About this RNA:
Structure probing data (DMS and 2A3) for a 177-nucleotide construct. Reactivities are given for positions 27 through 126. The reactions ran in a buffer of 150 mM KOAc, 10 mM MgCl2 and 150 mM bicine (pH 8.5), at 24 C.

RNA sequence: GGGAACGACUCGAGUAGAGUCGAAAACUACAACGGUGCAACUUUUUGUAGCAUGAUACUAGCUAAAACGUCGGACACAACAGCAGAGGUAGCGGCUGACGUGGUACGACUGAAAUUCAGGUAUGAACUCUUACUGGGUGUUCGCACCCAGUAAGAGAAAAGAAACAACAACAACAAC
Reactivity to DMS in 0.01 (KOAc 150mM, MgCl2 10mM, bicine 150mM(pH8.5), 24C), signal-to-noise 2, nucleotides 027 to 126: c000u000a030c060a020a050c280g040g040u000g020c090a110a130c090u000u000u000u000u000g010u010a060g010c040a060u000g020a040u000a010c040u000a070g020c110u000a040a070a150a170c180g000u000c000g020g020a160c030a030c020a120a300c030a030g010c000a030g000a150g040g000u020a050g020c070g000g040c010u010g010a060c300g010u000g000g010u000a110c030g010a030c000u000g000a020a090a160u000u000c040a040g010g000u000a060u000g000a050a160
Reactivity to 2A3 in 0.01 (KOAc 150mM, MgCl2 10mM, bicine 150mM(pH8.5), 24C), signal-to-noise 2, nucleotides 027 to 126: c050u060a030c010a110a020c070g100g010u040g050c010a050a090c070u070u100u020u200u290g090u100a020g000c040a000u060g040a060u050a050c040u040a040g110c060u110a090a060a030a090c060g000u040c020g020g020a020c020a010c000a020a130c000a000g030c000a010g080a100g300g040u120a050g090c050g030g000c000u010g020a020c060g000u010g040g030u260a010c000g000a000c000u000g060a010a040a020u130u130c010a000g110g000u110a020u110g060a090a050